[RMDB]
RNA sequence: GGGAACGACUCGAGUAGAGUCGAAAAGAUAUGGAGAACAUCAGAGCUGAUGACCCAUGGAGAUAGCUGUAUAUCGGAAACGAUAUACCGAAACCAUGGCAAGGCUCUGAUAAGUUCUCCUAAGUCACGUGUCUUAAGAGUUCGCUCUUAAGACACGAAAAGAAACAACAACAACAAC
Reactivity to 2A3 in 0.01 (KOAc 150mM, MgCl2 10mM, bicine 150mM(pH8.5), 24C), signal-to-noise 1, nucleotides 027 to 126: g000a000u020a010u090g000g010a010g010a000a020c000a050u000c010a020g010a020g000c000u030g050a300u040g000a190c060c020c000a010u010g030g010a220g050a180u230a110g050c010u040g000u010a020u000a000u000c010g000g000a010a010a000c020g000a000u000a000u000a000c000c000g020a020a020a000c020c000a000u010g030g000c030a200a300g000g000c020u030c000u000g000a010u000a010a000g000u000u010c000u000c000c010u010a000a010g010u000c000a000
Reactivity to DMS in 0.01 (KOAc 150mM, MgCl2 10mM, bicine 150mM(pH8.5), 24C), signal-to-noise 2, nucleotides 027 to 126: g000a030u000a110u030g000g000a000g000a000a000c040a060u000c010a010g000a010g040c000u010g050a100u020g010a100c300c000c010a000u010g010g040a060g020a230u000a080g010c090u030g000u010a000u020a000u020c000g000g020a070a010a100c010g000a010u000a010u010a000c000c100g000a070a170a120c010c000a000u000g010g000c000a030a050g040g010c000u030c000u000g020a010u000a030a090g060u000u010c000u010c000c000u010a010a060g000u010c000a270